[RMDB]
RNA sequence: GGGAACGACUCGAGUAGAGUCGAAAAACAUCACGACAUAGUAGAAGACGAUCAUAUGUCAAAGGUGCACGACACUAUAUCUGCAGACAUGAUGUGGGAGAAGGCUAGAUGCAACUUGGAAGAAGCAUCAUUUGUGCCUUUUCGAAGGCACAAAUGAAAAAGAAACAACAACAACAAC
Reactivity to 2A3 in 0.01 (KOAc 150mM, MgCl2 10mM, bicine 150mM(pH8.5), 24C), signal-to-noise 1, nucleotides 027 to 126: a000c010a000u050c020a010c060g020a010c030a030u060a020g070u060a030g050a150a030g080a060c060g060a080u090c040a120u020a020u120g000u000c000a000a060a040g030g010u010g030c050a000c120g110a010c020a000c030u050a060u010a000u180c080u050g000c030a020g030a070c020a080u170g090a000u050g060u070g000g000g050a040g000a090a040g060g000c030u060a040g020a040u040g020c020a040a060c050u080u120g160g000a150a040g030a080a000g000c010a050
Reactivity to DMS in 0.01 (KOAc 150mM, MgCl2 10mM, bicine 150mM(pH8.5), 24C), signal-to-noise 2, nucleotides 027 to 126: a090c030a050u000c050a020c300g020a070c020a030u000a050g010u000a140g030a060a110g000a190c220g000a100u000c050a070u030a030u000g000u010c020a080a100a060g040g020u000g000c080a040c080g000a070c090a030c120u000a100u000a060u000c030u000g040c030a050g010a150c070a050u000g040a060u010g020u000g010g000g000a060g000a070a050g020g000c040u000a050g000a060u000g000c060a060a080c050u000u000g010g020a070a100g010a050a110g030c070a030

The data come from the RNA Mapping Database (RMDB), library OK2TRN. This 177-nucleotide RNA was probed chemically with 2A3 and DMS. The 2A3 profile rests on 1,060 reads. The RNA was probed in 150 mM KOAc, 10 mM MgCl2 and 150 mM bicine (pH 8.5) at 24 C. Values are in units of 0.01, from 0 to 300, in steps of 10. For DMS the reverse transcriptase was MarathonRT.